RNA sequence: GGGAACGACUCGAGUAGAGUCGAAAAGUUUGUUCUUGUAAGAAUUCUCGAUGAGGACAAAGCAGAGUUCAAUAUUCAUAUAGUUGCAUCUACAUUUAUGUUUAUUCUUAUGAUGUCUUCAAUCUUAGGAGGAAAUUAAAUGAUUUUACUUACAUUGAUCAAAGCAUUUAUUCGUAAAUGCUUUGAUAAAAGAAACAACAACAACAAC
Reactivity to 2A3 in 0.01 (KOAc 150mM, MgCl2 10mM, bicine 150mM(pH8.5), 24C), signal-to-noise 4, nucleotides 027 to 156: g010u040u040u070g010u030u010c030u040u030g030u020a030a030g020a140a120u160u000c040u020c040g020a030u020g010a010g010g010a000c000a010a080a020g110c020a010g020a000g030u120u180c050a030a010u020a020u050u030c010a000u070a010u030a100g110u060u130g080c050a070u050c060u130a060c020a110u040u110u050a010u030g010u000u050u000a040u070u030c010u020u090a130u070g030a020u010g020u000c000u040u020c050a100a300u040c060u120u220a040g080g030a020g040g060a040a050a110u140u130a060a080a100u140g050a060u050u160u060u120a030c020u030u020a010c010a060u060u200g020
Reactivity to DMS in 0.01 (KOAc 150mM, MgCl2 10mM, bicine 150mM(pH8.5), 24C), signal-to-noise 2, nucleotides 027 to 156: g020u010u000u010g020u000u000c040u010u010g000u010a060a170g000a120a180u000u010c030u040c060g000a120u010g000a070g020g000a050c020a030a090a150g020c050a090g010a120g020u010u000c090a080a100u000a050u010u000c020a070u000a060u010a070g020u000u000g020c040a130u010c100u010a080c010a050u000u000u000a010u010g010u010u010u000a040u000u010c010u010u000a070u000g000a110u000g010u010c050u000u000c060a020a040u000c020u000u000a070g010g010a050g010g000a010a020a050u000u000a010a070a120u010g000a120u010u000u000u000a100c060u000u000a060c080a100u000u000g000